Chemical mapping of a 177-nucleotide RNA with 2A3 and DMS. The data come from the RNA Mapping Database (RMDB), library RFMREP. For DMS the reverse transcriptase was MarathonRT. Reactivities are rounded to 0.1 and cut off at 0 and 3.
RNA sequence: GGGAACGACUCGAGUAGAGUCGAAAAUGCAGUGAUGAUUCCAUAGACUAGAGUCUCUGAUAACAACAUGAAGAUCUACACAUUUCUCUGAGCAAAACCGUAUCAACCAGUUCGCUGGUUGAUACGGGUAUAUUGGACUCUUCGGAGUCCAAUAUACAAAAGAAACAACAACAACAAC
Reactivity to 2A3 in 0.01 (KOAc 150mM, MgCl2 10mM, bicine 150mM(pH8.5), 24C), signal-to-noise 4, nucleotides 027 to 126: u090g020c030a020g040u030g060a090u040g010a020u120u010c020c010a040u080a050g080a050c050u050a050g010a040g140u010c010u000c010u070g050a050u090a200a040c070a020a010c010a080u110g060a090a040g000a070u020c030u090a040c040a000c000a050u010u070u040c030u010c030u070g080a070g050c040a020a040a040a100c000c000g000u000a000u000c000a010a000c000c000a000g000u040u040c130g060c070u010g000g000u000u000g000a000u000a000c000g000g000
Reactivity to DMS in 0.01 (KOAc 150mM, MgCl2 10mM, bicine 150mM(pH8.5), 24C), signal-to-noise 4, nucleotides 027 to 126: u000g010c040a080g000u000g020a080u000g000a130u000u000c040c030a100u000a080g010a080c090u000a070g010a130g020u010c020u000c050u010g010a110u020a080a110c140a070a080c070a060u000g000a080a090g000a060u000c030u000a090c060a070c050a060u000u000u000c010u000c010u000g010a110g030c140a050a070a080a270c010c000g010u000a000u010c000a000a000c000c000a010g000u000u020c280g020c010u000g010g000u000u000g000a000u000a000c000g000g010